[RMDB]
RNA sequence: GGGAACGACUCGAGUAGAGUCGAAAAAAAGAUGUUUUCAUUAAUCAAGAACGAAAGUUAGAGGUUCGAAGGCGAUCAGAUACCGCCCUAGUUUUAACCAUAAAAGAUGCCAGCUAGCAAUUGGGUGCAUAAUCAUGUUCUUCGGAACAUGAUUAUGAAAAGAAACAACAACAACAAC
Reactivity to 2A3 in 0.01 (KOAc 150mM, MgCl2 10mM, bicine 150mM(pH8.5), 24C), signal-to-noise 2, nucleotides 027 to 126: a000a000a000g050a030u070g040u000u030u020u050c020a020u010u130a070a060u080c040a020a080g050a090a020c020g030a120a010a010g010u050u060a020g040a060g090g000u040u030c030g000a010a010g010g020c030g020a010u020c050a040g100a200u070a060c000c060g000c010c000c000u000a040g020u000u050u000u140a050a010c030c010a050u050a130a090a010a010g030a000u040g020c000c000a010g000c060u040a030g010c030a040a140u050u060g060g040g020u060g000
Reactivity to DMS in 0.01 (KOAc 150mM, MgCl2 10mM, bicine 150mM(pH8.5), 24C), signal-to-noise 4, nucleotides 027 to 126: a060a050a090g020a080u010g010u010u000u000u000c040a080u000u000a090a040u010c050a060a140g000a030a030c040g000a090a080a120g000u000u000a060g010a210g000g000u000u000c180g010a080a120g000g020c030g010a040u010c070a100g010a100u010a060c090c040g010c010c010c010u010a120g000u000u000u000u000a030a130c110c050a040u000a050a030a070a080g010a060u000g000c040c020a040g000c080u000a040g000c060a030a070u000u000g010g010g020u000g010